[RMDB]
The record gives the reactivity of an RNA of 177 nucleotides to DMS and 2A3. In probing experiments dimethyl sulfate is read out at A N1 and C N3, which are open when not base-paired. Reactivities are given for positions 27 through 126.
RNA sequence: GGGAACGACUCGAGUAGAGUCGAAAAUAGUGAGGUAGAGCGACCGAUUGGGUGGCCAGCAGUAGAAAUACUGCACCACUUUGUCAAACUCCGAACUUGCUAGAAUCGAAGAUACCAGGUGCUAGGGUCUACGUAGAACCUUCGGGUUCUACGUAGAAAAAGAAACAACAACAACAAC
Reactivity to DMS in 0.01 (KOAc 150mM, MgCl2 10mM, bicine 150mM(pH8.5), 24C), signal-to-noise 5, nucleotides 027 to 126: u000a010g020u000g000a020g000g020u030a100g000a020g010c190g000a300c300c250g000a090u010u020g010g000g030u000g000g000c100c190a050g000c000a000g000u000a010g010a210a070a160u000a000c000u010g010c030a160c000c000a000c000u000u000u000g020u020c010a070a300a220c030u000c020c060g010a100a170c000u000u010g000c000u000a000g000a090a080u010c070g020a070a050g000a060u010a060c040c030a080g010g030u000g010c050u000a050g010g010g000
Reactivity to 2A3 in 0.01 (KOAc 150mM, MgCl2 10mM, bicine 150mM(pH8.5), 24C), signal-to-noise 5, nucleotides 027 to 126: u050a010g010u020g010a010g020g050u120a040g010a020g030c030g070a060c080c010g020a070u030u120g030g010g000u020g000g020c120c160a050g000c010a000g020u000a000g040a020a020a010u030a000c000u000g000c000a010c000c000a000c000u020u020u060g020u020c010a040a050a100c010u010c020c020g040a100a070c000u010u000g010c000u000a040g080a070a080u110c090g060a100a020g030a070u130a100c030c040a060g040g050u080g020c050u100a060g030g080g020
It was measured as part of the RMDB libraries RFM100 and RFMREP.